[RMDB]
RNA sequence: GGGAACGACUCGAGUAGAGUCGAAAAGUGCAGCAGCCUGGAUGCAUCUCAAGGAAAUGAUGCUGAGUGAGAAAGCAGCAUAUGCAGAAGGGAACAUACUGUACGAUUCUGCUUCCAUGACAUUCUGGAAAUAACAGAAUUAUGACAGUGGAGAACAAAAUCGUGACGGUUUCGACCGUCACGAUUUAAAAGAAACAACAACAACAAC
Reactivity to 2A3 in 0.01 (KOAc 150mM, MgCl2 10mM, bicine 150mM(pH8.5), 24C), signal-to-noise 1, nucleotides 027 to 156: g020u020g000c010a040g010c010a010g010c000c010u000g020g030a000u020g000c010a000u020c020u090c100a140a120g040g000a130a060a130u220g010a000u040g070c060u020g010a010g010u080g010a080g000a000a150a040g070c020a000g060c000a040u020a000u150g000c030a020g000a010a000g020g000g000a040a000c010a010u100a030c000u000g000u000a080c000g010a000u010u010c010u010g020c000u010u000c010c000a010u140g020a010c000a110u190u010c090u000g030g000a100a000a000u140a090a000c020a000g040a010a000u080u110a090u160g070a040c070a020g020u080g030g020a120g000a070a000c000a000
Conditions: 150 mM KOAc, 10 mM MgCl2 and 150 mM bicine (pH 8.5), 24 C. Chemical mapping of a 207-nucleotide RNA with 2A3. It was measured as part of the RMDB library OK3TST. For 2A3 the reverse transcriptase was SuperScript II with manganese.